Chemical mapping of a 177-nucleotide RNA with 2A3. The reactions ran in a buffer of 150 mM KOAc, 10 mM MgCl2 and 150 mM bicine (pH 8.5), at 24 C. The data come from the RNA Mapping Database (RMDB), library RFM100. Reactivities are given for positions 27 through 126.
RNA sequence: GGGAACGACUCGAGUAGAGUCGAAAAGUACGUACCCUCUCAACUCUAAAACUCUUGUAGUUUAAAUCUAAUCUAAACUUUAUAAACGGCACUUCCUGCGUGUCCAUGCCCGCGGGCCUGGUCUUGUCCGUACUUCAGUGUUCGCACUGAAGUACGGAAAAGAAACAACAACAACAAC
Reactivity to 2A3 in 0.01 (KOAc 150mM, MgCl2 10mM, bicine 150mM(pH8.5), 24C), signal-to-noise 1, nucleotides 027 to 126: g040u020a020c080g010u080a070c000c010c050u090c010u000c010a100a210c000u000c000u110a060a000a100a000c000u020c000u160u210g140u140a020g000u040u100u140a080a150a050u110c090u120a080a040u050c000u090a030a030a030c000u080u080u090a110u040a100a110a000c020g000g000c000a020c000u050u000c000c010u010g000c000g090u080g010u010c040c010a000u120g020c000c020c000g000c000g000g030g000c000c080u020g000g000u060c100u020u000g040u000